[RMDB]
RNA sequence: GGGAACGACUCGAGUAGAGUCGAAAAGAGGAUCAACUUUGGGAGUGUUUGCAAUUUUAUCCUGGAUUGGUUUAUUGCCAUCAUAUGAAAAGUAUUUUACAAGUGUUUCAGGAUAUCAAGCUUGUAAUCCUACUACAGAGUUCGCUCUGUAGUAGGAAAAAGAAACAACAACAACAAC
Reactivity to DMS in 0.01 (KOAc 150mM, MgCl2 10mM, bicine 150mM(pH8.5), 24C), signal-to-noise 3, nucleotides 027 to 126: g010a070g020g020a070u000c080a060a100c060u010u000u010g010g000g010a080g030u000g010u000u000u010g010c070a050a030u000u000u010u010a050u000c010c010u000g010g010a030u000u010g020g010u000u000u020a110u020u000g010c000c000a050u010c030a080u000a090u010g000a060a050a090a130g010u000a060u000u000u010u010a030c020a030a050g020u000g010u010u000u010c040a040g000g010a050u000a050u010c110a050a190g000c020u000u000g010u000a030a050
Reactivity to 2A3 in 0.01 (KOAc 150mM, MgCl2 10mM, bicine 150mM(pH8.5), 24C), signal-to-noise 1, nucleotides 027 to 126: g050a010g030g000a000u040c000a030a110c060u030u110u090g090g000g020a040g070u070g070u050u150u180g000c000a000a000u070u000u140u070a040u050c020c020u060g070g030a040u020u080g010g010u060u060u210a090u180u170g040c000c000a030u050c020a030u150a040u130g070a030a050a000a050g000u000a070u070u140u000u000a000c000a000a000g000u020g030u020u070u120c060a030g000g020a030u000a110u140c050a090a000g050c030u000u000g000u030a110a040

This 177-nucleotide RNA was probed chemically with DMS and 2A3. Values cover nucleotides 27 to 126. Conditions: 150 mM KOAc, 10 mM MgCl2 and 150 mM bicine (pH 8.5), 24 C. The DMS profile rests on 3,878 reads. Reactivities are rounded to 0.1 and cut off at 0 and 3.